[RMDB]
Chemical mapping of a 177-nucleotide RNA with DMS and 2A3. Reactivities are given for positions 27 through 126. 2A3 adducts were read by reverse transcription with SuperScript II with manganese. For DMS, 12,400 sequencing reads were counted.
RNA sequence: GGGAACGACUCGAGUAGAGUCGAAAAGUGGGAGGGUGCCCAGCAAUUAGAACCAUUCGUUCAUUCAUCCAUUCGUUCAAUACUCAUUGAGCAACUACUAUGUGCUUGGCACUGUUUUAGAUGCUGGGCAUCUGUACCAAUUCGUUGGUACAGAUGCAAAAGAAACAACAACAACAAC
Reactivity to DMS in 0.01 (KOAc 150mM, MgCl2 10mM, bicine 150mM(pH8.5), 24C), signal-to-noise 9, nucleotides 027 to 126: g010u000g000g000g010a160g000g000g010u000g000c010c000c000a020g010c010a030a070u010u010a060g010a030a040c030c200a140u000u000c100g020u010u000c020a080u000u000c080a070u010c120c080a110u000u000c170g010u020u000c030a010a040u000a110c250u010c180a090u000u000g000a020g010c010a090a090c160u010a080c190u010a060u000g010u000g010c030u000u000g020g010c040a030c060u000g000u000u000u000u000a040g010a100u000g010c010u000g000g000
Reactivity to 2A3 in 0.01 (KOAc 150mM, MgCl2 10mM, bicine 150mM(pH8.5), 24C), signal-to-noise 3, nucleotides 027 to 126: g100u100g000g040g020a130g010g040g000u020g000c000c000c000a010g010c010a010a100u130u070a050g020a050a020c020c060a140u120u140c080g040u070u060c020a010u080u030c010a060u050c060c020a050u090u110c080g000u030u020c010a020a020u070a220c090u120c180a060u000u040g020a000g000c000a040a050c020u180a040c020u080a070u230g070u020g020c030u030u040g020g000c020a010c050u030g080u000u070u020u020a090g010a050u040g020c020u040g000g020